[RMDB]
RNA sequence: GGGAACGACUCGAGUAGAGUCGAAAAAAUGAAGGAGUAAAAUGGGAGUUGAAGGAAGUAAAAAUAGAAGAAAAAGAAGAGAAAGAGAGGUUGUGAAGAGACAAGACUGGAUCAAAGAUCCUAUAGAGUCGGAUAUGGGACUUUCAAUUUCGUGUCAGACCAUAUUUAUAUUCGUAUAAAUAUGGUCAAAAGAAACAACAACAACAAC
Reactivity to DMS in 0.01 (KOAc 150mM, MgCl2 10mM, bicine 150mM(pH8.5), 24C), signal-to-noise 1, nucleotides 027 to 156: a060a080u040g020a090a070g040g020a060g060u010a050a020a050a080u030g030g000g000a080g000u000u010g030a110a080g020g010a010a100g000u000a000a020a030a090a120u000a050g000a100a090g000a100a010a050a040a140g010a050a100g020a220g000a130a060a060g000a090g020a090g000g020u000u000g040u010g000a060a060g040a180g010a060c000a050a080g000a090c180u000g000g010a030u010c030a040a030a140g000a080u000c020c010u010a060u010a040g000a220g040u010c110g000g000a210u000a060u010g000g000g040a070c000u000u000u000c020a050a130u000u000u000c040g020u000g000u000c040a090
Reactivity to 2A3 in 0.01 (KOAc 150mM, MgCl2 10mM, bicine 150mM(pH8.5), 24C), signal-to-noise 1, nucleotides 027 to 156: a000a000u080g010a020a080g020g040a040g020u100a040a040a100a110u120g010g030g000a050g010u020u030g040a000a000g010g040a000a000g010u080a010a020a000a100a000u150a070g060a040a000g010a020a100a000a000a020g040a030a000g020a010g040a000a040a000g050a000g000a000g030g000u090u030g020u010g080a000a020g000a010g000a040c000a020a020g010a020c050u070g020g010a020u010c030a000a210a000g030a070u000c060c030u050a040u020a100g040a000g080u050c040g010g010a010u000a020u090g040g010g080a040c050u060u110u000c260a150a220u050u140u150c080g040u100g090u110c020a010

Structure probing data (DMS and 2A3) for a 207-nucleotide construct. Source: RMDB library OK3TST, as collected in RNAgym. 2A3 adducts were read by reverse transcription with SuperScript II with manganese.